[RMDB]
RNA sequence: GGGAACGACUCGAGUAGAGUCGAAAAAUCAGGUAAGACAUUUGACGUAAAGAGACAACAUUAUAUCCUGCUGGAAGAGACGAAAACAUCAAAGUUAGUUCUCAAGAUGAUGAUUUAUGAGAUCCUGCCCAUGGGCAUAGUUCGCUAUGCCCAUGGGAAAAGAAACAACAACAACAAC
Reactivity to DMS in 0.01 (KOAc 150mM, MgCl2 10mM, bicine 150mM(pH8.5), 24C), signal-to-noise 1, nucleotides 027 to 126: a140u000c010a010g030g000u000a080a050g000a150c120a050u030u000u010g000a010c080g020u000a050a080a060g000a160g000a050c050a020a020c050a090u020u000a030u000a220u000c070c040u020g100c110u000g000g000a120a020g000a090g040a050c020g010a050a110a030a050c080a010u010c090a050a070a050g020u000u000a140g000u000u000c010u000c050a110a080g020a150u000g000a070u020g000a120u000u000u000a020u030g000a090g000a100u000c030c060u020g000
Reactivity to 2A3 in 0.01 (KOAc 150mM, MgCl2 10mM, bicine 150mM(pH8.5), 24C), signal-to-noise 1, nucleotides 027 to 126: a000u040c030a020g080g000u060a000a000g060a020c020a090u030u040u180g030a000c050g040u090a120a090a030g100a020g030a030c000a060a000c000a040u070u100a130u090a010u040c060c010u100g150c060u090g110g020a040a060g020a040g020a100c000g000a000a030a030a100c050a030u110c100a000a120a000g020u030u040a020g000u070u030c020u000c000a010a050g100a020u080g020a020u130g000a030u050u000u140a180u080g040a030g000a060u020c010c060u100g000